Chemical mapping of a 177-nucleotide RNA with 2A3 and DMS. Values cover nucleotides 27 to 126. It was measured as part of the RMDB library OK2TST. 2A3 adducts were read by reverse transcription with SuperScript II with manganese. DMS adducts were read by reverse transcription with MarathonRT.
[RMDB]
RNA sequence: GGGAACGACUCGAGUAGAGUCGAAAAGGAACUCGAUUAUGUGGUAUUUGAAUCUGUCCAUUGCCUUUGGUUACAAGUUGCCUUAAUGUAAAAUACCACAAGGUGGCACUAUAAAUAGGCUUUAUCAUCCUCCCACUAUAUUCGUAUAGUGGGAGGAAAAAGAAACAACAACAACAAC
Reactivity to 2A3 in 0.01 (KOAc 150mM, MgCl2 10mM, bicine 150mM(pH8.5), 24C), signal-to-noise 2, nucleotides 027 to 126: g030g000a070a050c010u020c060g090a140u110u130a170u300g010u000g020g000u020a010u010u040u030g020a040a060u020c070u050g060u000c000c020a040u010u090g040c010c020u060u030u040g060g000u080u080a060c060a130a090g030u090u050g080c000c000u050u080a000a000u020g020u030a040a000a000a000u000a010c000c030a030c040a010a040g140g050u120g020g000c030a000c130u080a060u060a200a060a040u060a020g000g000c000u090u130u090a140u180c080a060
Reactivity to DMS in 0.01 (KOAc 150mM, MgCl2 10mM, bicine 150mM(pH8.5), 24C), signal-to-noise 5, nucleotides 027 to 126: g000g020a110a140c030u000c060g010a110u010u010a090u010g030u000g010g000u000a010u000u000u000g000a160a130u000c070u000g010u000c010c030a060u000u010g000c080c060u000u010u000g000g010u030u020a060c110a070a100g010u000u010g010c020c020u000u010a040a070u000g010u010a030a030a010a020u000a010c000c000a010c030a060a080g010g040u000g010g010c050a080c100u000a080u010a040a050a070u000a070g000g010c010u010u000u000a060u010c150a150